[RMDB]
RNA sequence: GGGAACGACUCGAGUAGAGUCGAAAAACUAGUAUGUACAGGGGUGAGUUGACCUGUCAUCUAGACUGCUGACCAUCAACUCACCGGUCAGCUGGUUGAUGUCCACAGAGUACGACAUCAGUACUCAGUCUAUUGACUAGUUCGCUGGUCGAUAGACAAAAGAAACAACAACAACAAC
Reactivity to 2A3 in 0.01 (KOAc 150mM, MgCl2 10mM, bicine 150mM(pH8.5), 24C), signal-to-noise 9, nucleotides 027 to 126: a000c000u000a000g030u080a150u200g070u100a010c020a030g190g050g030g040u050g040a040g030u040u030g070a060c020c060u030g030u000c000a000u010c000u020a030g120a220c090u060g010c010u010g010a000c000c020a030u040c020a020a030c010u010c030a020c020c000g000g000u000c000a000g000c000u000g010g000u000u020g040a120u090g040u020c010c000a050c050a070g010a000g000u000a000c030g080a040c150a230u140c050a060g000u000a000c000u000c000a000
Reactivity to DMS in 0.01 (KOAc 150mM, MgCl2 10mM, bicine 150mM(pH8.5), 24C), signal-to-noise 5, nucleotides 027 to 126: a070c000u000a000g010u030a010u000g010u060a000c020a020g000g000g000g000u000g000a020g010u000u000g010a050c100c080u000g010u000c000a000u020c040u000a060g010a160c140u010g000c050u000g010a020c000c300a150u010c050a000a010c020u000c020a030c050c060g000g000u000c000a010g000c010u010g000g010u000u000g000a080u020g010u000c000c050a100c190a080g000a030g000u000a010c000g000a300c300a230u090c300a140g000u000a010c000u000c000a290